Source: RMDB library OK2TRN, as collected in RNAgym.
This 177-nucleotide RNA was probed chemically with 2A3 and DMS.
Values cover nucleotides 27 to 126.
For DMS, 141,091 sequencing reads were counted.

RNA sequence: GGGAACGACUCGAGUAGAGUCGAAAACUGAGGCUGGCAUGGUCAGUGCUGUUGUGCACAUGGACAUAAGAUCCACCCAACUUGGUGUUAUCUUUGCAUUCGCAAGCUGUUGCCAGGCACAUCCAUGUCAUCAAUGUAUAUUCGUAUACAUUGAUGAAAAAGAAACAACAACAACAAC
Reactivity to 2A3 in 0.01 (KOAc 150mM, MgCl2 10mM, bicine 150mM(pH8.5), 24C), signal-to-noise 9, nucleotides 027 to 126: c040u040g030a040g170g000c060u040g020g000c010a020u030g030g020u080c090a060g020u030g010c020u060g080u300u150g090u170g030c010a020c010a080u090g060g020a030c010a040u190a040a030g010a030u000c020c010a010c010c020c010a120a210c110u100u210g000g000u030g030u100u120a040u020c020u020u040u060g010c040a090u130u140c090g000c110a060a050g030c040u060g050u160u050g010c010c010a020g040g000c010a000c000a030u010c020c000a040u070g040
Reactivity to DMS in 0.01 (KOAc 150mM, MgCl2 10mM, bicine 150mM(pH8.5), 24C), signal-to-noise 9, nucleotides 027 to 126: c070u010g010a100g010g020c090u000g010g010c010a030u000g000g010u000c140a130g020u000g010c010u000g010u010u010g020u010g020c020a040c070a090u000g010g010a070c100a100u010a050a040g000a050u000c300c020a040c030c010c230a090a140c250u010u000g010g010u000g000u000u010a040u000c020u000u000u000g010c070a130u010u010c170g000c090a050a090g010c080u000g000u000u000g010c010c010a110g010g000c020a030c050a130u000c020c020a040u000g000